RNA sequence: GGGAACGACUCGAGUAGAGUCGAAAAUGGACUGCGUUCGCGCAGUCCAAAAGAAUAGACGAACACUAGCGUAGUAGUGUUCAGGUCACAUAACUACGCAAAAAAGCUGAGUGUUCGCACUCAGCAAGCUGGUAAGAAUGUUCGCAUUCUUACCAGCAAAAGAAACAACAACAACAAC
Reactivity to DMS in 0.01 (KOAc 150mM, MgCl2 10mM, bicine 150mM(pH8.5), 24C), signal-to-noise 2, nucleotides 027 to 126: u000g000g030a000c000u000g010c010g020u010u010c220g060c020g030c000a010g000u000c000c010a000a030a080a050g020a190a120u000a140g010a130c110g000a040a000c000a000c020u000a140g000c020g020u020a020g020u000a010g000u000g010u000u000c050a070g020g000u010c080a080c110a060u000a150a030c020u000a000c000g000c000a000a040a090a080a070a080g020c000u000g010a000g000u020g010u000u010c180g010c000a010c000u010c000a000g000c000a020a030
Reactivity to 2A3 in 0.01 (KOAc 150mM, MgCl2 10mM, bicine 150mM(pH8.5), 24C), signal-to-noise 2, nucleotides 027 to 126: u040g010g010a000c000u000g010c000g030u020u060c110g000c010g000c080a000g010u020c000c000a000a000a000a000g030a030a060u140a070g110a070c070g000a040a000c010a000c020u020a020g000c010g000u000a000g010u000a000g000u030g000u020u020c020a000g050g060u090c060a010c010a170u080a070a030c010u000a010c030g000c000a020a000a030a040a060a060g000c000u010g000a000g010u000g020u050u060c140g010c000a000c000u000c000a000g000c000a000a020

The record gives the reactivity of an RNA of 177 nucleotides to DMS and 2A3. For DMS the reverse transcriptase was MarathonRT. Conditions: 150 mM KOAc, 10 mM MgCl2 and 150 mM bicine (pH 8.5), 24 C. The data come from the RNA Mapping Database (RMDB), library M2PK50. Reactivities are rounded to 0.1 and cut off at 0 and 3.